[RMDB]
RNA sequence: GGGAACGACUCGAGUAGAGUCGAAAAUCACUGGCUGCAAUGGCGUACGCACGUAGAUACAGGUUCCGUCGAAGACCGGUUCGCAAGAUGCAAAGGCGUAGGCGUCGAUUUCGUCGCCGUGCACGCCCUGGAUUCGCUACUUCGGUAGCGAAUCCAGAAAAGAAACAACAACAACAAC
Reactivity to 2A3 in 0.01 (KOAc 150mM, MgCl2 10mM, bicine 150mM(pH8.5), 24C), signal-to-noise 1, nucleotides 027 to 126: u080c020a020c100u030g050g010c020u060g000c040a070a150u120g060g000c080g000u050a020c020g030c050a060c050g030u000a040g000a070u010a120c030a070g060g000u060u000c010c010g040u080c100g080a100a000g030a050c030c070g030g120u000u000c030g000c140a080a060g050a130u080g020c060a000a080a080g040g000c010g010u020a100g000g000c010g020u020c000g010a150u160u030u140c060g000u000c000g000c030c000g040u010g070c000a000c040g030c020c020
Reactivity to DMS in 0.01 (KOAc 150mM, MgCl2 10mM, bicine 150mM(pH8.5), 24C), signal-to-noise 2, nucleotides 027 to 126: u000c050a120c100u000g020g010c010u000g020c080a070a090u000g000g020c090g020u000a080c080g000c070a070c140g000u000a070g000a100u010a050c100a050g020g000u010u000c050c050g000u010c100g020a080a070g000a110c100c020g000g010u000u000c050g000c110a060a100g000a070u000g030c050a060a120a110g010g000c030g020u000a160g000g000c020g000u000c010g000a240u010u010u010c030g030u000c010g000c010c000g020u000g010c120a010c060g010c020c010